[RMDB]
RNA sequence: GGGAACGACUCGAGUAGAGUCGAAAACAGCGCGUCCUCAUCGUCAGAGUCGGCAUACCGGAAGCGCUCAUAGCUGACUUCGGCCAGCAGGCCGGUCCAGUCGCCCGACAGUGCGUGCUGGGAUGCCUGUGCGCGUAAGAUUCGUCUUACGCGCACAAAAAGAAACAACAACAACAAC
Reactivity to 2A3 in 0.01 (KOAc 150mM, MgCl2 10mM, bicine 150mM(pH8.5), 24C), signal-to-noise 3, nucleotides 027 to 126: c040a030g020c020g000c000g060u060c000c050u010c060a110u110c010g080u060c020a020g020a040g190u110c030g010g000c020a050u100a110c000c020g040g050a100a040g080c000g010c050u030c050a130u190a040g020c030u030g050a050c000u070u050c050g070g000c030c000a060g000c020a020g070g010c030c000g060g000u020c050c040a050g020u050c010g030c010c020c010g020a020c040a040g030u060g090c000g010u080g010c030u040g010g050g060a030u070g030c030c040
Reactivity to DMS in 0.01 (KOAc 150mM, MgCl2 10mM, bicine 150mM(pH8.5), 24C), signal-to-noise 1, nucleotides 027 to 126: c110a060g020c040g000c050g030u000c040c000u040c030a090u000c140g000u080c030a140g030a240g000u010c020g000g000c030a020u020a020c010c020g000g020a020a120g010c110g090c050u010c220a040u010a010g060c110u050g000a040c090u060u000c000g000g040c000c000a070g080c080a180g000g010c000c000g000g000u040c030c040a120g080u000c260g000c010c130c090g020a090c250a050g000u000g010c000g020u080g030c050u000g000g000g000a060u000g020c000c000